Description: Source: RMDB library TTRDEL, as collected in RNAgym. The record gives the reactivity of an RNA of 177 nucleotides to DMS and 2A3. 2A3 adducts were read by reverse transcription with SuperScript II with manganese. The RNA was probed in 150 mM KOAc, 10 mM MgCl2 and 150 mM bicine (pH 8.5) at 24 C. Reactivities are given for positions 27 through 126. The DMS profile rests on 1,068 reads.
[RMDB]
RNA sequence: GGGAACGACUCGAGUAGAGUCGAAAAGAUAUGGAUGUACGGGAGCUCUCGGGUCGGAAACGACCCACGCGAGAGCAUCGAUCGACAUCCUAAGUCAAACAGCGUAAGCCUUCGGGCUUACGCUGAAGGAAUACCAGUUGUUCGCAACUGGUAUUCCAAAAGAAACAACAACAACAAC
Reactivity to DMS in 0.01 (KOAc 150mM, MgCl2 10mM, bicine 150mM(pH8.5), 24C), signal-to-noise 1, nucleotides 027 to 126: g020a040u000a300u000g020g000a010u010g010u000a170c030g000g000g010a030g040c010u010c000u000c000g010g010g000u010c000g020g000a060a130a250c030g000a040c010c000c020a030c190g030c150g000a030g010a010g000c010a040u010c070g000a060u010c030g000a030c000a010u000c000c010u000a010a070g020u000c080a100a020a300c050a010g000c000g000u000a010a020g010c000c000u010u020c180g050g010g010c000u000u000a000c000g020c000u000g000a020a020
Reactivity to 2A3 in 0.01 (KOAc 150mM, MgCl2 10mM, bicine 150mM(pH8.5), 24C), signal-to-noise 1, nucleotides 027 to 126: g020a040u090a050u050g000g000a000u000g000u080a190c010g010g040g030a030g000c030u040c010u040c100g010g000g050u000c020g010g020a030a040a000c030g010a000c020c080c030a020c070g180c140g020a010g000a000g020c020a060u080c010g010a090u100c000g040a030c010a010u060c000c010u000a100a000g040u050c050a110a070a130c010a010g000c000g000u000a000a000g000c000c020u050u090c300g030g030g030c000u000u010a000c010g000c000u000g010a000a000